The record gives the reactivity of an RNA of 177 nucleotides to DMS and 2A3. Values cover nucleotides 27 to 126. For 2A3 the reverse transcriptase was SuperScript II with manganese.
[RMDB]
RNA sequence: GGGAACGACUCGAGUAGAGUCGAAAAAACGGUUUGACGUACAGACCAUUAAAGCAGUGUAGUAAGGCAAGUCCCUUCAAGAGUUAUCGUUGAUACCCCUCGUAGUGCACAUUCCUUUAACGCUUCAUUAGAAGUAUAUCUUCGGAUAUACUUCUAAAAAAGAAACAACAACAACAAC
Reactivity to DMS in 0.01 (KOAc 150mM, MgCl2 10mM, bicine 150mM(pH8.5), 24C), signal-to-noise 9, nucleotides 027 to 126: a060a060c110g000g000u000u010u000g010a130c180g010u020a130c070a050g000a060c030c010a120u010u020a050a090a070g010c060a050g010u010g010u010a060g010u010a060a060g010g010c060a050a080g010u000c030c020c010u000u010c090a050a060g000a080g010u010u010a040u010c050g010u000u000g000a080u020a090c060c020c010c020u000c060g010u000a040g010u010g010c050a040c070a120u000u010c020c010u000u020u010a070a070c190g010c050u000u000c100a160
Reactivity to 2A3 in 0.01 (KOAc 150mM, MgCl2 10mM, bicine 150mM(pH8.5), 24C), signal-to-noise 9, nucleotides 027 to 126: a000a000c090g000g040u040u020u050g080a060c080g040u140a070c060a040g040a030c010c010a040u100u220a100a080a020g030c050a030g010u030g010u150a060g030u030a090a020g050g000c040a030a040g070u070c010c010c000u020u050c080a090a020g020a020g050u070u050a050u100c070g040u060u050g030a040u100a130c000c000c010c010u010c020g040u040a030g030u030g030c020a010c010a080u020u030c010c000u080u110u110a080a020c070g040c020u040u020c020a070